Overview:
The data come from the RNA Mapping Database (RMDB), library OK1LIB. The record gives the reactivity of an RNA of 177 nucleotides to DMS and 2A3.

[RMDB]
RNA sequence: GGGAACGACUCGAGUAGAGUCGAAAACUGCCCUGGGUUUUCGCUGUCUUACAGAUAGACUGUGCCUAAUUAGUUCGUCUCUUAAUCGGAUGGAAAUUGUGAAAUUUGUAAGGGCGGAUAACUAACGCGAUAAGUUAAGAUUCGUCUUAAUUUAUCGAAAAGAAACAACAACAACAAC
Reactivity to DMS in 0.01 (KOAc 150mM, MgCl2 10mM, bicine 150mM(pH8.5), 24C), signal-to-noise 7, nucleotides 027 to 126: c140u040g000c010c010c000u000g000g010g010u000u000u010u000c010g020c010u000g000u040c050u010u020a040c050a040g000a030u010a050g010a090c050u010g000u010g010c070c040u010a050a070u020u020a080g010u010u000c020g010u000c010u020c070u000u030a100a100u030c170g000g000a040u010g000g010a040a040a020u020u020g010u020g010a130a060a030u000u010u000g020u010a030a020g010g000g000c000g000g010a030u030a010a050c050u010a050a100c210g000
Reactivity to 2A3 in 0.01 (KOAc 150mM, MgCl2 10mM, bicine 150mM(pH8.5), 24C), signal-to-noise 9, nucleotides 027 to 126: c070u130g020c000c000c010u030g040g000g010u000u010u000u030c010g010c010u030g080u150c010u030u050a030c020a010g030a040u050a030g090a050c040u080g040u100g090c000c010u090a130a110u060u090a050g060u010u030c010g020u000c040u010c000u120u090a130a100u140c050g020g010a020u040g040g110a040a030a020u130u070g060u050g100a120a100a070u040u020u020g030u030a010a010g000g000g000c020g000g010a050u080a050a020c010u010a070a020c080g020
The 2A3 profile rests on 22,441 reads. For 2A3 the reverse transcriptase was SuperScript II with manganese.